[RMDB]
RNA sequence: GGGAACGACUCGAGUAGAGUCGAAAAUAAAAAACGUCCCAAAAUUCCGAUCCGGCUUCCACAUCGAGCCUCAGCUAGAUCCAUAACUUGCUGGCAAGAUGUUGGCAGUCGCAUUGGAUAAAGGAGACACAAACUCGGAACGUUCGCGUUCCGAGAACUCAAAUCUAAUGUUCGCAUUAGAUUUGAGAAAAGAAACAACAACAACAAC
Reactivity to 2A3 in 0.01 (KOAc 150mM, MgCl2 10mM, bicine 150mM(pH8.5), 24C), signal-to-noise 2, nucleotides 027 to 156: u080a030a090a000a020a010a030c070g010u040c010c000c030a140a150a050a160u060u010c000c000g000a000u020c020c000g000g000c000u000u000c000c000a000c010a000u000c000g010a000g010c000c040u110c050a000g010c010u070a020g030a140u090c100c040a070u120a270a160c010u010u020g000c000u000g000g000c000a010a020g000a000u010g030u090u010g020g000c020a000g010u000c000g030c000a000u000u010g000g000a000u020a000a060a000g080g040a120g090a010c030a000c080a140a140a080c020u000c000g000g000a000a000c000g030u040u080c190g030c000g100u000u000c020c000g000a000g000a000a000
Chemical mapping of a 207-nucleotide RNA with 2A3. Reactivities are rounded to 0.1 and cut off at 0 and 3. Values cover nucleotides 27 to 156. The data come from the RNA Mapping Database (RMDB), library RFM130. The RNA was probed in 150 mM KOAc, 10 mM MgCl2 and 150 mM bicine (pH 8.5) at 24 C.